[RMDB]
RNA sequence: GGGAACGACUCGAGUAGAGUCGAAAACGCUGGGUCGCAUGUUUAGACAUGCUUUAUACUGAAGCGCGCACGGUAUUGAGCAACAGCUAAACCGCUGCGACCUGUGCUGAAGCGCGCACGGCAACCGAAAGGUGCGAAAGGUCCGCUUCGGCGGACCCUACACUUCAGGCUUCGGCCUGAAGUGUAGAAAAGAAACAACAACAACAAC
Reactivity to 2A3 in 0.01 (KOAc 150mM, MgCl2 10mM, bicine 150mM(pH8.5), 24C), signal-to-noise 1, nucleotides 027 to 156: c010g000c010u040g000g000g010u000c000g050c010a030u140g030u020u000u020a080g010a300c090a200u250g000c000u000u030u000a000u000a000c000u010g050a230a100g050c030g020c020g000c020a020c000g000g000u000a010u000u040g000a010g030c100a040a220c040a220g050c010u000a000a000a000c010c000g000c010u000g000c000g030a000c000c000u000g010u000g000c020u100g000a080a030g020c000g000c010g000c020a010c030g060g000c040a120a180c040c020g110a140a090a000g020g010u020g000c050g030a190a060a040g000g000u010c000c000g040c040u120u000c130g080g040c010g000g020a000c000c000
Structure probing data (2A3) for a 207-nucleotide construct. For 2A3, 1,193 sequencing reads were counted. It was measured as part of the RMDB library RNAMAK.